[RMDB]
RNA sequence: GGGAACGACUCGAGUAGAGUCGAAAACCAGCUAAAUUAUCAUGUUAUGUUACUGCUGCUACAGUGAAUCCCCCUGUGCGGUGGGGUGUAAUUGGUUAUCAAUGGAAACAGCUGUUUGUUUGCCACACUAUCGGAAUUUAUUCGUAAAUUCCGAUAGAAAAGAAACAACAACAACAAC
Reactivity to 2A3 in 0.01 (KOAc 150mM, MgCl2 10mM, bicine 150mM(pH8.5), 24C), signal-to-noise 6, nucleotides 027 to 126: c000c000a000g020c040u090a070a120a170u180u120a110u100c050a050u110g070u110u100a050u070g050u060u070a230c010u030g030c000u010g010c030u060a040c010a020g010u040g100a080a120u080c040c010c000c000c000u020g030u050g080c050g030g020u080g000g010g000g000u020g010u010a070a040u020u030g030g020u030u050a110u160c070a090a070u040g040g040a100a090a040c040a060g030c020u040g040u030u070u060g020u000u030u090g130c030c020a050c000a020
Reactivity to DMS in 0.01 (KOAc 150mM, MgCl2 10mM, bicine 150mM(pH8.5), 24C), signal-to-noise 9, nucleotides 027 to 126: c010c010a130g000c110u020a060a090a090u010u020a040u010c060a040u020g010u000u010a050u010g010u000u000a110c040u000g010c030u000g000c030u020a040c030a020g010u000g010a120a130u010c020c020c020c110c010u000g020u000g020c050g010g020u010g010g000g000g000u000g010u010a030a040u000u010g010g010u010u000a060u010c100a070a070u010g000g010a060a080a080c110a070g020c070u010g000u000u010u010g010u010u000u000g010c040c030a080c250a180
Source: RMDB libraries RFM100 and RFMREP, as collected in RNAgym. The record gives the reactivity of an RNA of 177 nucleotides to 2A3 and DMS. Reactivities are given for positions 27 through 126.